About this RNA:
The data come from the RNA Mapping Database (RMDB), library OK3TST. Structure probing data (DMS and 2A3) for a 207-nucleotide construct. Values cover nucleotides 27 to 156. For DMS the reverse transcriptase was MarathonRT. The 2A3 profile rests on 1,808 reads.

RNA sequence: GGGAACGACUCGAGUAGAGUCGAAAAGCGUCGUGGUCGGAGAGAAGGAAGUCGAGCGGCGCAUCUACACCCGCCGUGUGCCCUACCUCACGCCCGUCUCGCUCGAGCGCCUCGCCGCGUUCGGCCUCCACGUAUCAGUGCGCGAAGACCUGGCGACAAGACUAGAUGAGUUCGCUCAUCUAGUCUUAAAAGAAACAACAACAACAAC
Reactivity to DMS in 0.01 (KOAc 150mM, MgCl2 10mM, bicine 150mM(pH8.5), 24C), signal-to-noise 1, nucleotides 027 to 156: g020c050g020u000c030g010u000g030g030u000c020g080g010a140g060a190g040a210a120g000g000a060a080g000u020c060g010a170g020c000g010g000c010g000c090a020u000c080u000a120c070a130c050c070c050g040c000c020g020u000g040u000g030c010c000c010u000a090c090c020u000c020a050c070g000c020c000c000g000u000c060u000c040g000c020u000c000g000a060g070c030g030c000c010u000c030g020c040c080g020c070g050u000u000c100g020g000c030c010u000c000c050a050c030g010u020a170u000c110a160g000u000g000c060g020c010g000a080a070g020a050c020c020u120g040g020c060g000a140c130
Reactivity to 2A3 in 0.01 (KOAc 150mM, MgCl2 10mM, bicine 150mM(pH8.5), 24C), signal-to-noise 3, nucleotides 027 to 156: g020c020g000u050c030g030u040g030g000u030c100g060g000a080g040a060g050a140a120g060g060a140a030g090u120c060g040a020g000c000g000g000c000g010c040a050u060c040u090a040c060a040c020c020c000g010c000c010g080u060g130u140g080c020c000c030u030a050c020c020u040c010a020c010g010c040c010c000g020u000c000u000c020g000c000u020c000g000a010g000c010g030c010c000u060c030g070c120c010g030c030g020u030u080c020g000g020c020c010u070c020c030a040c030g060u110a090u260c060a090g010u050g080c070g000c040g070a040a000g030a060c030c030u030g000g010c010g060a050c080